This 177-nucleotide RNA was probed chemically with 2A3 and DMS.
Reactivities are given for positions 27 through 126.
RNA sequence: GGGAACGACUCGAGUAGAGUCGAAAAACUAGUCAUGCAUUACGAUGCAUGACUAGAAGAGGCCACCUCAAACAGAGACACUGAUGGUUUUGAUUUCCUAAGUGCUUCUCUUUGGGGUUGUCUCAAAGUAAUUAUGACUAUUCGUAGUCAUAAUUACAAAAGAAACAACAACAACAAC
Reactivity to 2A3 in 0.01 (KOAc 150mM, MgCl2 10mM, bicine 150mM(pH8.5), 24C), signal-to-noise 9, nucleotides 027 to 126: a000c000u000a000g000u000c000a000u000g000c000a000u030u060a070c250g150a010u020g000c000a000u010g000a000c000u000a000g000a010a020g000a000g000g000c000c010a000c000c000u000c000a030a050a030c100a050g000a000g020a010c000a000c010u040g030a110u250g070g120u080u070u130u220g240a210u080u090u090c000c000u010a030a010g000u000g010c060u120u030c000u000c000u000u000u000g000g000g000g000u000u000g000u000c000u000c000a030a020a010
Reactivity to DMS in 0.01 (KOAc 150mM, MgCl2 10mM, bicine 150mM(pH8.5), 24C), signal-to-noise 9, nucleotides 027 to 126: a110c000u000a000g010u000c000a000u000g000c000a000u010u010a130c210g020a050u010g010c010a010u000g000a000c000u000a000g000a070a080g010a020g010g000c000c020a030c000c000u000c000a000a010a030c140a020g010a020g000a040c000a000c010u000g000a160u020g000g010u000u010u030u030g010a230u020u010u000c000c000u000a300a020g010u000g000c030u010u000c000u000c150u000u000u000g000g000g010g010u000u000g000u000c000u000c000a030a050a090
DMS adducts were read by reverse transcription with MarathonRT.